[RMDB]
RNA sequence: GGGAACGACUCGAGUAGAGUCGAAAAGCCAUUUCUGGCGACGCGCAGGCGACGGUUAACGGCAUUGGCGAUUGUGUCGGGUAGCGCUCGUCACGAUAGCGACGGCGACGCUGACCGCUUACGCGCAUGGACCAUCCUGGUUCGCCAGGAUGGUCCAAAAAGAAACAACAACAACAAC
Reactivity to DMS in 0.01 (KOAc 150mM, MgCl2 10mM, bicine 150mM(pH8.5), 24C), signal-to-noise 1, nucleotides 027 to 126: g000c020c000a140u000u050u000c130u020g030g010c040g000a200c160g000c010g070c200a070g000g000c090g030a000c010g000g000u000u000a070a280c050g180g040c000a010u000u000g030g000c020g050a020u110u000g100u030g010u000c050g000g000g000u000a100g000c080g030c070u000c000g000u000c000a030c120g000a070u020a150g040c090g000a130c000g000g000c040g050a140c060g020c000u010g040a090c060c000g000c030u060u000a100c020g000c020g000c050a140
Reactivity to 2A3 in 0.01 (KOAc 150mM, MgCl2 10mM, bicine 150mM(pH8.5), 24C), signal-to-noise 2, nucleotides 027 to 126: g020c040c000a080u010u120u070c010u140g070g000c000g030a050c050g010c030g000c010a020g030g040c050g030a090c060g110g090u090u060a120a030c000g050g040c070a080u000u080g140g030c060g080a110u090u060g000u000g050u110c060g010g000g070u050a050g020c070g010c150u020c030g030u000c000a000c070g080a130u140a150g040c070g190a130c040g000g040c040g030a030c020g000c020u020g030a050c000c010g000c050u110u080a070c090g010c000g000c000a100

An RNA of 177 nucleotides, treated with DMS and 2A3 and read out base by base. Source: RMDB library OK1LIB, as collected in RNAgym. DMS adducts were read by reverse transcription with MarathonRT. Values are in units of 0.01, from 0 to 300, in steps of 10. The reactions ran in a buffer of 150 mM KOAc, 10 mM MgCl2 and 150 mM bicine (pH 8.5), at 24 C.